[RMDB]
RNA sequence: GGGAACGACUCGAGUAGAGUCGAAAACUGCCGGUAGUCGGGGUCCAUCACGUCGCCCGCGCCGAAGACGCCCGCGACGGUCGUCUCGGUGGUCAUCCCCUCGAGGGUCUCAAGGUGCCCGCUGUCGCCCGGUGGAUACUUUCGAGUAUCCACCGGGAAAAGAAACAACAACAACAAC
Reactivity to 2A3 in 0.01 (KOAc 150mM, MgCl2 10mM, bicine 150mM(pH8.5), 24C), signal-to-noise 2, nucleotides 027 to 126: c000u040g030c020c000g070g030u080a040g090u070c000g020g030g030g000u050c140c000a050u150c040a020c020g010u030c040g040c010c000c020g000c000g000c030c000g000a000a070g030a000c000g020c000c040c000g010c070g140a160c180g020g030u040c020g020u000c020u000c000g000g000u050g030g030u030c000a190u090c020c000c020c000u120c050g080a240g000g000g040u000c000u030c090a130a070g060g000u040g000c020c040c000g020c000u040g030u120c030g000

Notes:
Structure probing data (2A3) for a 177-nucleotide construct. 2A3 adducts were read by reverse transcription with SuperScript II with manganese. It was measured as part of the RMDB library OK1LIB.